[RMDB]
RNA sequence: GGGAACGACUCGAGUAGAGUCGAAAAUAAAACAGCCAACACUGGCGUUCGGUUUUCUGCCAGCAUACGGAAAUGGCUUUCAAGUUGAGAUUGUAGCGGAUACUGGCACGCUAUGGUACGAGUGUUAGAAGAACUUACAUUUCGAUGUAAGUUCUUCAAAAGAAACAACAACAACAAC
Reactivity to DMS in 0.01 (KOAc 150mM, MgCl2 10mM, bicine 150mM(pH8.5), 24C), signal-to-noise 7, nucleotides 027 to 126: u010a070a050a070a090c090a100g010c020c020a070a090c160a090c100u000g010g010c020g010u000u010c100g020g010u010u010u010u010c080u010g010c000c020a050g010c060a060u010a100c130g010g000a060a060a090u010g010g000c050u000u000u010c100a100a110g010u000u010g010a120g000a070u000u000g010u000a050g010c030g010g000a090u000a060c030u000g010g020c060a070c050g000c040u000a030u000g000g000u000a060c100g000a070g020u010g010u000u010a160
Reactivity to 2A3 in 0.01 (KOAc 150mM, MgCl2 10mM, bicine 150mM(pH8.5), 24C), signal-to-noise 3, nucleotides 027 to 126: u170a010a080a010a030c040a000g050c020c000a070a000c090a030c070u020g040g000c020g020u060u070c060g050g040u090u070u090u030c040u050g020c000c000a030g020c030a080u110a110c050g060g030a030a060a060u100g040g010c000u030u100u070c120a130a080g020u060u100g110a090g010a120u010u070g040u020a020g010c020g020g000a020u040a150c020u030g010g040c060a000c030g000c000u020a030u120g030g010u030a050c050g030a040g050u060g010u080u060a050